This 177-nucleotide RNA was probed chemically with DMS.

RNA sequence: GGGAACGACUCGAGUAGAGUCGAAAAGAUAUGGACCUUGAUAAAGCUCUCAACGCCAGGUGUAAUAUAUUCGGAAACGAAUAUUUAAGCCUGGCGUUGAGAGAACUACUUUGCAAGGUCCUAAGUCGCAGAUACUAAUGUUCGCAUUAGUAUCUGCAAAAGAAACAACAACAACAAC
Reactivity to DMS in 0.01 (KOAc 150mM, MgCl2 10mM, bicine 150mM(pH8.5), 24C), signal-to-noise 2, nucleotides 027 to 126: g010a140u010a300u000g000g000a010c000c000u000u000g010a100u030a010a020a020g010c030u010c000u000c020a040a000c000g000c000c000a000g000g000u000g020u000a060a180u000a020u000a010u000u000c000g000g000a080a130a170c010g010a040a000u010a000u000u000u000a160a300g000c000c010u010g020g010c000g000u000u000g010a010g010a000g020a000a010c090u030a300c000u000u020u000g000c030a010a010g000g010u000c000c000u010a000a110g000u010c100

Reactivities are rounded to 0.1 and cut off at 0 and 3.